[RMDB]
The data come from the RNA Mapping Database (RMDB), library 15KLIB. Structure probing data (DMS and 2A3) for a 170-nucleotide construct. DMS adducts were read by reverse transcription with MarathonRT. 2A3 adducts were read by reverse transcription with SuperScript II with manganese. The reactions ran in a buffer of 150 mM KOAc, 10 mM MgCl2 and 150 mM bicine (pH 8.5), at 24 C.
RNA sequence: GGGAACGACUCGAGUAGAGUCGAAAAUUGCUGUUAUCUACAGCGGCAGGGAGUCUCUAAUAUUCCCAUCGGGAACCUAUUACUGUGUCACCACUAAGGCUAAGUCCGUUCAACAAGAUCUUGACGUUACCCACCAACUUCGGUUGGUGGAAAAGAAACAACAACAACAAC
Reactivity to DMS in 0.01 (KOAc 150mM, MgCl2 10mM, bicine 150mM(pH8.5), 24C), signal-to-noise 2, nucleotides 027 to 129: u050u030g040c010u010g020u000u000a130u050c010u070a040c090a080g020c050g000g000c080a070g000g010g000a030g050u030c040u020c100u000a000a000u030a020u060u020c000c000c000a090u030c000g000g000g020a070a090c050c110u050a070u020u010a110c100u030g030u040g040u000c030a010c060c030a000c070u000a010a000g000g000c050u020a010a120g000u020c010c090g000u000u000c040a020a060c110a080a070g010a080u030c010u040u080g000a050c090g040u060u020a080c110
Reactivity to 2A3 in 0.01 (KOAc 150mM, MgCl2 10mM, bicine 150mM(pH8.5), 24C), signal-to-noise 6, nucleotides 027 to 129: u110u060g010c030u010g010u080u060a130u170c080u120a080c020a030g010c000g030g040c030a030g000g030g020a090g070u010c000u000c000u060a090a080u060a090u140u020c020c000c010a010u090c040g000g000g020a040a080c020c010u040a110u070u100a140c080u060g010u020g030u130c020a080c040c000a000c030u070a030a000g020g000c020u030a010a030g020u030c020c010g020u060u040c020a030a050c000a030a040g030a080u040c030u100u100g020a010c020g090u030u030a060c000